[RMDB]
Record summary:
Source: RMDB library RNAMAK, as collected in RNAgym. Chemical mapping of a 207-nucleotide RNA with DMS and 2A3. The reactions ran in a buffer of 150 mM KOAc, 10 mM MgCl2 and 150 mM bicine (pH 8.5), at 24 C. High 2A3 reactivity points to a flexible backbone, as in loops and unpaired stretches. For 2A3, 2,900 sequencing reads were counted.
RNA sequence: GGGAACGACUCGAGUAGAGUCGAAAAUACAGGAUUCGUCCUGUAAAAAAAGGGGUCACCCGAUGAGAGGUACUUCCGAAGAACCUGAAGCCUCCACGGGGGAGGAAGGCCUCGAGGGUGACGGAGGCACCCAAAAAGACCACAUUCGUGUGGUCAAUUAUGUACAAUACUUCGGUAUUGUACAUAAAAAAGAAACAACAACAACAAC
Reactivity to DMS in 0.01 (KOAc 150mM, MgCl2 10mM, bicine 150mM(pH8.5), 24C), signal-to-noise 2, nucleotides 027 to 156: u000a000c010a020g020g030a040u010u020c300g020u000c000c010u000g010u000a010a000a070a120a060a080a100g010g030g000g000u000c030a040c010c010c010g010a110u020g000a230g010a050g010g000u000a110c010u000u000c000c010g000a170a200g020a120a170c040c030u000g000a050a150g000c040c010u010c010c030a280c070g010g020g000g010g030a090g000g010a010a040g010g010c000c000u000c010g010a090g020g020g020u010g030a030c050g000g020a060g030g000c000a110c030c000c030a040a060a060a110a160g000a020c000c000a020c000a120u000u000c290g010u010g020u000g000g000u000c010a010a050
Reactivity to 2A3 in 0.01 (KOAc 150mM, MgCl2 10mM, bicine 150mM(pH8.5), 24C), signal-to-noise 3, nucleotides 027 to 156: u070a000c010a000g000g010a050u030u150c150g080u060c030c000u010g000u000a070a060a010a000a000a000a040g090g010g000g010u060c030a020c000c000c030g060a280u170g060a050g020a030g040g040u230a300c000u000u020c000c020g090a190a080g030a080a060c020c020u050g020a090a000g050c010c020u050c030c010a020c020g000g000g010g000g010a030g010g000a000a010g020g040c020c000u000c010g000a060g000g000g000u000g000a000c010g000g000a010g040g040c020a070c030c000c040a020a110a010a020a010g010a010c020c010a000c020a030u050u100c220g080u030g000u000g030g010u010c000a000a000